[RMDB]
RNA sequence: GGGAACGACUCGAGUAGAGUCGAAAAGCAAGCCACAGCGAAAGCAAGUACAUAGCAACGCGAGAGGGGACGGAGAUGUGGUUUAGAUUUCGAGGAGCAUCUAUCAAGUCAUCGGGCGAGGCAAGCCCGUGCGUUCUUCUGCCAUGUAGUCGAAUGAAAAUCAAGGCUUUUUCGAAAGCCUUGAUUUAAAAGAAACAACAACAACAAC
Reactivity to 2A3 in 0.01 (KOAc 150mM, MgCl2 10mM, bicine 150mM(pH8.5), 24C), signal-to-noise 3, nucleotides 027 to 156: g070c030a020a000g000c020c010a040c070a020g040c050g060a070a020a020g030c030a040a030g080u070a070c030a120u150a060g010c070a140a020c030g020c020g050a010g020a010g050g000g020g010a030c040g040g020a080g020a060u050g020u020g050g000u030u040u040a050g000a100u090u080u080c030g020a030g010g040a010g040c000a030u010c030u070a100u110c060a040a030g060u020c000a030u090c020g000g010g000c010g050a060g010g140c050a050a020g010c010c000c010g000u000g000c000g010u020u040c010u030u020c010u040g060c010c030a040u120g010u090a070g020u050c080g100a090a040u250g090a060
Reactivity to DMS in 0.01 (KOAc 150mM, MgCl2 10mM, bicine 150mM(pH8.5), 24C), signal-to-noise 3, nucleotides 027 to 156: g000c050a050a150g010c020c050a080c040a090g000c040g000a100a090a110g030c030a040a090g030u000a110c050a080u000a140g000c030a080a080c080g020c040g010a110g000a090g020g020g050g010a070c070g040g010a040g010a090u000g030u000g040g010u010u000u000a120g020a190u000u000u000c070g030a110g010g010a130g010c050a090u000c050u000a060u000c040a020a080g030u000c010a040u000c020g050g020g010c020g000a080g010g000c170a070a160g020c000c000c010g020u000g010c040g010u000u000c030u000u000c050u000g000c020c050a180u000g020u000a070g000u000c050g020a120a120u000g000a120